This 207-nucleotide RNA was probed chemically with DMS and 2A3. For 2A3, 1,983 sequencing reads were counted.

RNA sequence: GGGAACGACUCGAGUAGAGUCGAAAAAUGCAACAAAAUGGGCUGGAUGUGGUCCAGUGGACAGUGUGCCCUGAUCUGGAUAAAAUAGAAACUGUGUCAGUCACCAAAACCGAUAACACAGCGCUCCGUGGCACGCGACAGCUCGUGGUGAGGGGUAGUAGGUACCUAAUUUCGAUUAGGUACCUACAAAAGAAACAACAACAACAAC
Reactivity to DMS in 0.01 (KOAc 150mM, MgCl2 10mM, bicine 150mM(pH8.5), 24C), signal-to-noise 2, nucleotides 027 to 156: a110u000g040c010a130a200c070a070a060a080a100u000g010g030g000c020u000g010g000a090u000g000u000g030g000u020c030c020a060g030u000g030g030a040c040a220g000u020g010u020g010c020c010c010u000g010a080u000c070u030g000g050a160u010a050a050a050a180u000a090g000a090a120a060c030u000g020u000g040u000c020a120g020u000c020a160c080c030a030a040a100a170c300c020g000a070u000a000a010c010a030c020a030g010c000g000c050u010c030c020g020u000g020g010c040a040c010g040c030g020a020c050a090g000c030u000c040g050u000g050g010u010g000a090g000g010g040g010u000a190
Reactivity to 2A3 in 0.01 (KOAc 150mM, MgCl2 10mM, bicine 150mM(pH8.5), 24C), signal-to-noise 3, nucleotides 027 to 156: a000u090g020c030a030a030c040a100a140a040a080u070g020g020g010c000u040g040g070a190u090g130u120g160g010u000c010c010a000g070u070g030g020a010c030a060g010u020g000u040g130c020c040c000u020g040a100u090c050u060g010g030a040u070a100a070a060a020u130a110g110a050a040a050c030u020g000u000g030u070c060a070g040u070c020a040c090c060a090a110a060a090c060c080g010a020u040a040a010c020a000c020a010g030c030g040c050u050c050c050g030u130g000g000c000a000c010g020c020g000a010c020a010g040c010u040c040g030u060g020g040u070g020a060g000g010g020g000u030a040
Annotation
The DMS profile rests on 2,954 reads. The RNA was probed in 150 mM KOAc, 10 mM MgCl2 and 150 mM bicine (pH 8.5) at 24 C.